[RMDB]
RNA sequence: GGGAACGACUCGAGUAGAGUCGAAAAAGCACUCCGCGACAGGACCAGGCUCGUCCUGUCUCAUCGUCGCACUAUGGUGCGACGACGCGAUUCCGUGUUGAAUGACGUUUGCCCUCGUCUGGGCAACAAGGUGCCCUAUUUUCGAAUAGGGCACCUUAAAAGAAACAACAACAACAAC
Reactivity to DMS in 0.01 (KOAc 150mM, MgCl2 10mM, bicine 150mM(pH8.5), 24C), signal-to-noise 2, nucleotides 027 to 126: a050g000c090a080c050u010c050c060g030c060g010a040c030a050g020g000a050c040c150a130g000g000c100u010c100g030u020c000c000u000g000u000c030u000c130a120u000c020g040u020c000g000c000a030c010u030a100u050g020g050u020g010c010g000a000c000g020a000c150g000c010g010a130u000u000c030c070g050u010g000u000u000g000a060a080u000g000a050c220g030u030u020u020g010c000c010c000u000c300g000u030c140u010g000g000g000c000a030a020c120
Reactivity to 2A3 in 0.01 (KOAc 150mM, MgCl2 10mM, bicine 150mM(pH8.5), 24C), signal-to-noise 2, nucleotides 027 to 126: a030g080c060a030c060u080c080c040g000c020g020a010c020a000g000g050a010c050c000a120g090g070c120u140c130g000u000c020c000u000g000u000c000u070c000a050u000c000g010u000c020g000c030a000c010u080a100u300g300g000u000g000c000g000a000c000g000a000c020g000c000g000a040u210u040c050c080g070u020g010u180u110g140a200a160u130g070a060c070g040u000u020u060g000c000c010c010u080c040g280u040c190u160g000g010g010c000a000a000c010